The record gives the reactivity of an RNA of 177 nucleotides to DMS. Values cover nucleotides 27 to 126. The DMS profile rests on 969 reads. Conditions: 150 mM KOAc, 10 mM MgCl2 and 150 mM bicine (pH 8.5), 24 C.
[RMDB]
RNA sequence: GGGAACGACUCGAGUAGAGUCGAAAAGAUAUGGAGUCCCUGUAUCAAGAGCUCGGAAACGAGGCUCUUUCAACGCAGGACUCCUAAGUCAAAGUAAAUGCUGCUCCUUCGGGAGCAGCAUUUACAACACAAAUGUUGACUUCGGUCAACAUUUGUGAAAAGAAACAACAACAACAAC
Reactivity to DMS in 0.01 (KOAc 150mM, MgCl2 10mM, bicine 150mM(pH8.5), 24C), signal-to-noise 1, nucleotides 027 to 126: g000a070u000a300u010g000g000a000g010u010c090c120c020u010g030u000a110u010c160a000a010g000a000g000c000u000c000g010g000a040a070a170c000g000a010g050g000c000u000c000u000u000u010c180a100a120c170g020c000a030g010g010a080c000u000c000c010u010a000a060g010u000c010a130a110a080g000u000a010a010a010u000g010c000u030g020c010u010c000c010u010u010c170g050g000g000a030g000c010a000g000c000a000u000u000u000a020c020a100a220